[RMDB]
RNA sequence: GGGAACGACUCGAGUAGAGUCGAAAAUGAGGACCAUUUGUCCUUCCAAAACUUUGUGCAAGCGCAGGGGACGGGCUCGAAUGCUGACAUGAUCCAGCAUGGACAUAACUUGCUUGUGUAUGUCGCGUCUCUUUGGUACUUUCGAGUACCAAAGAGAAAAAGAAACAACAACAACAAC
Reactivity to 2A3 in 0.01 (KOAc 150mM, MgCl2 10mM, bicine 150mM(pH8.5), 24C), signal-to-noise 6, nucleotides 027 to 126: u220g020a050g020g020a020c040c040a110u120u070u300g020u010c000c000u010u080c010c000a050a040a070a100c090u150u120u130g050u060g020c060a110a100g030c040g000c050a030g010g010g000g020a010c000g040g020g000c020u010c070g080a090a050u090g010c050u100g010a020c010a070u100g010a090u070c020c000a000g000c000a030u030g060g000a060c030a120u090a070a030c030u030u110g010c000u040u030g030u010g010u040a020u020g030u010c010g010c020g090
Reactivity to DMS in 0.01 (KOAc 150mM, MgCl2 10mM, bicine 150mM(pH8.5), 24C), signal-to-noise 4, nucleotides 027 to 126: u080g020a050g000g020a040c020c300a250u020u030u050g010u000c010c000u000u010c040c010a070a040a080a120c170u020u030u000g020u010g020c110a080a090g010c120g000c070a070g000g000g010g010a070c080g000g000g000c010u010c060g010a050a060u000g000c010u040g000a090c100a110u020g020a110u010c100c030a030g000c000a040u010g010g000a060c080a050u000a040a050c080u020u000g030c080u000u000g000u000g010u000a040u010g010u000c030g000c090g030